[RMDB]
The record gives the reactivity of an RNA of 207 nucleotides to 2A3 and DMS. Reactivities are given for positions 27 through 156. As a SHAPE reagent, 2A3 marks flexible, mostly unpaired nucleotides at the ribose 2'-OH.

RNA sequence: GGGAACGACUCGAGUAGAGUCGAAAAAGCGAUGGAGGCCGAGUUCAGCCUCACCGAGGACCAGCGCGAAUGCAUCGAGCAGCUCGGCCGAUUCCUGCGGGAGGGCAUCGGCAAGCUGACCGCUCUGUCUGAGCGGGUAGCCGAUGGCGAUAUCGUCAGUACCUAAACAGUUCGCUGUUUAGGUACUAAAAGAAACAACAACAACAAC
Reactivity to 2A3 in 0.01 (KOAc 150mM, MgCl2 10mM, bicine 150mM(pH8.5), 24C), signal-to-noise 4, nucleotides 027 to 156: a000g060c040g030a020u080g040g000a030g030g000c020c020g010a010g010u050u090c090a030g030c030c010u040c040a230c060c110g020a040g000g030a090c080c060a070g020c060g010c030g120a070a080u180g050c030a100u080c120g030a030g050c020a010g010c030u000c040g020g000c060c000g000a000u000u020c000c010u060g040c070g040g010g000a100g050g040g050c000a000u010c000g000g010c040a050a020g010c050u080g070a080c010c000g010c010u000c010u050g300u060c140u160g010a000g000c000g000g000g000u020a010g000c010c010g010a000u010g020g020c010g040a060u040a010u140c040g040u050c040
Reactivity to DMS in 0.01 (KOAc 150mM, MgCl2 10mM, bicine 150mM(pH8.5), 24C), signal-to-noise 2, nucleotides 027 to 156: a110g010c050g020a090u010g000g060a250g040g020c010c000g020a080g000u000u000c050a090g010c020c030u000c090a060c070c030g030a120g010g020a060c040c020a130g030c030g020c020g010a100a130u020g000c070a240u000c050g010a060g010c000a290g000c030u000c010g020g000c010c010g000a040u000u010c010c010u000g000c030g000g010g010a200g010g000g010c040a070u000c020g030g030c020a100a100g010c040u000g010a060c000c000g020c000u000c010u010g020u010c220u000g010a040g030c000g010g000g000u000a080g030c020c010g000a040u000g020g000c050g030a070u000a110u000c030g020u020c120

The 2A3 profile rests on 3,898 reads.